[RMDB]
Chemical mapping of a 177-nucleotide RNA with DMS and 2A3. It was measured as part of the RMDB library OK2TST. DMS adducts were read by reverse transcription with MarathonRT. The reactions ran in a buffer of 150 mM KOAc, 10 mM MgCl2 and 150 mM bicine (pH 8.5), at 24 C.

RNA sequence: GGGAACGACUCGAGUAGAGUCGAAAAACUAAAGCACCAUUUCAAUAUAAAUGUGCUACAAGAGCCGAAAGUCCCAGCAUGCUUUAAUAUUAAAUAAGAUUGAUUCUUGGGUAUGUAUUGAGGGUCAUCCAUGUAUGUUAUUCGUAACAUACAUGGAAAAAGAAACAACAACAACAAC
Reactivity to DMS in 0.01 (KOAc 150mM, MgCl2 10mM, bicine 150mM(pH8.5), 24C), signal-to-noise 5, nucleotides 027 to 126: a120c080u000a080a120a040g000c010a030c110c100a020u000u000u000c110a100a130u010a110u000a030a020a040u020g010u000g010c010u000a110c190a100a110g010a070g010c040c030g000a100a060a120g010u000c000c000c000a130g000c040a030u000g000c010u000u000u000a050a060u020a090u000u000a030a040a090u020a050a080g000a300u000u000g000a070u000u010c060u000u000g010g000g010u000a010u000g000u000a060u000u010g020a120g010g010g000u000c060a170
Reactivity to 2A3 in 0.01 (KOAc 150mM, MgCl2 10mM, bicine 150mM(pH8.5), 24C), signal-to-noise 4, nucleotides 027 to 126: a020c080u130a140a110a030g010c000a010c080c030a010u040u050u060c130a240a080u060a020u090a300a020a010u060g000u010g000c000u040a050c050a050a080g010a020g150c000c010g070a130a060a010g030u000c000c000c000a000g000c010a010u010g010c000u240u090u140a190a090u300a160u210u170a090a080a100u120a150a030g030a040u000u140g010a020u140u050c030u050u050g050g000g010u030a010u030g030u000a100u030u130g080a130g010g020g050u020c020a000